[RMDB]
RNA sequence: GGGAACGACUCGAGUAGAGUCGAAAAUACAUCAUAUUGGCUGUGUGGCUAUGGGCUGGUUACUCUACCUCUCCAAGCCUGGCUUUUUCACUAGUAAAUUCAUAUGAUAAUCAUAAUAUCUUUGAACAUGCUCAUGUGUGUGCAUCCUAUAACCCAACUUUUAAAAUGGAUUCGUCCAUUUUAAAAGAAAAGAAACAACAACAACAAC
Reactivity to DMS in 0.01 (KOAc 150mM, MgCl2 10mM, bicine 150mM(pH8.5), 24C), signal-to-noise 2, nucleotides 027 to 156: u010a110c040a080u000c030a150u000a070u000u000g020g030c000u000g010u020g010u000g030g020c040u010a090u020g040g030g020c010u000g020g020u010u000a090c130u030c080u000a130c010c010u000c040u000c030c020a080a120g010c030c000u000g000g000c030u010u000u010u010u010c000a090c060u010a070g010u000a040a090a090u010u000c020a020u000a040u020g000a090u000a050a130u000c070a100u000a140a140u000a050u010c010u010u000u000g020a050a030c030a190u000g010c020u000c100a080u010g040u020g010u020g030u000g020c040a070u000c080c020u000a130u000a080a300c010c010c010a030a200
Reactivity to 2A3 in 0.01 (KOAc 150mM, MgCl2 10mM, bicine 150mM(pH8.5), 24C), signal-to-noise 6, nucleotides 027 to 156: u090a010c020a040u080c020a030u070a070u130u100g040g000c030u030g030u040g050u070g130g000c020u120a250u150g050g000g000c030u030g000g050u070u070a100c030u060c060u150a080c020c020u040c000u000c010c010a030a030g000c000c000u000g000g010c000u090u050u030u080u120c040a030c040u060a020g060u100a040a130a210u090u050c020a010u040a030u240g010a010u030a070a040u090c040a010u040a300a040u060a160u050c020u040u040u060g020a020a020c020a050u160g010c000u040c070a060u070g030u010g010u020g010u020g050c000a030u020c010c020u120a110u070a170a090c000c010c010a010a070
Chemical mapping of a 207-nucleotide RNA with DMS and 2A3. 2A3 adducts were read by reverse transcription with SuperScript II with manganese. The RNA was probed in 150 mM KOAc, 10 mM MgCl2 and 150 mM bicine (pH 8.5) at 24 C. The 2A3 profile rests on 4,670 reads.